[RMDB]
RNA sequence: GGGAACGACUCGAGUAGAGUCGAAAAAAUCGAAAAUCGGCUCGUUGUUUUCGGGGUGCGUUUGGGUUAAAUUAUACACUUCUGAGAUCUGAUUUAGCUCUCGGACGUAUACGAGUCUUAAAUAAUGCCUUAUACGACGGUUCGCCGUCGUAUAAGGAAAAGAAACAACAACAACAAC
Reactivity to DMS in 0.01 (KOAc 150mM, MgCl2 10mM, bicine 150mM(pH8.5), 24C), signal-to-noise 1, nucleotides 027 to 126: a070a070u010c070g000a100a090a090a090u010c140g010g000c000u000c010g000u000u020g010u000u000u010u020c070g020g000g000g020u010g020c040g020u000u000u000g010g020g000u010u020a030a050a060u000u000a000u020a120c100a090c240u010u000c050u010g010a080g000a070u000c070u010g010a080u020u010u030a060g010c100u000c020u000c040g030g020a000c230g040u000a040u010a000c040g000a040g010u000c060u000u030a060a100a090u020a090a090u010g010